[RMDB]
RNA sequence: GGGAACGACUCGAGUAGAGUCGAAAAGGGGUCCAUUGUUAGCUCCCGAAGAACAGAUAGGGAGAACUGAAGCCUCCACGGUUCAUCGAUCUAUCUGGGAGGGAGCGAGAAUGGACGGAGGCACCCAAACUGUGAGUUUCUUCGGAAACUCACAGAACACUUCCGUUUUGUUCGCAAAACGGAAGUGAAAAGAAACAACAACAACAAC
Reactivity to 2A3 in 0.01 (KOAc 150mM, MgCl2 10mM, bicine 150mM(pH8.5), 24C), signal-to-noise 1, nucleotides 027 to 156: g000g000g000g010u010c010c010a000u000u010g110u060u040a010g000c000u010c000c000c030g120a280a000g010a010a000c010a000g010a000u020a000g030g010g000a020g010a010a000c010u060g010a020a010g010c000c000u000c000c000a020c020g020g040u010u000c020a100u300c050g000a000u000c000u010a000u000c010u000g000g030g000a020g000g010g010a010g000c000g000a000g000a000a010u020g000g010a020c000g000g010a000g000g010c000a020c000c010c050a080a130a010c000u010g000u010g000a000g000u000u010u000c020u050u160c300g070g000a000a000a000c000u000c000a000c000a000g000a010a000

Annotation
An RNA of 207 nucleotides, treated with 2A3 and read out base by base. The RNA was probed in 150 mM KOAc, 10 mM MgCl2 and 150 mM bicine (pH 8.5) at 24 C. Values cover nucleotides 27 to 156. High 2A3 reactivity points to a flexible backbone, as in loops and unpaired stretches.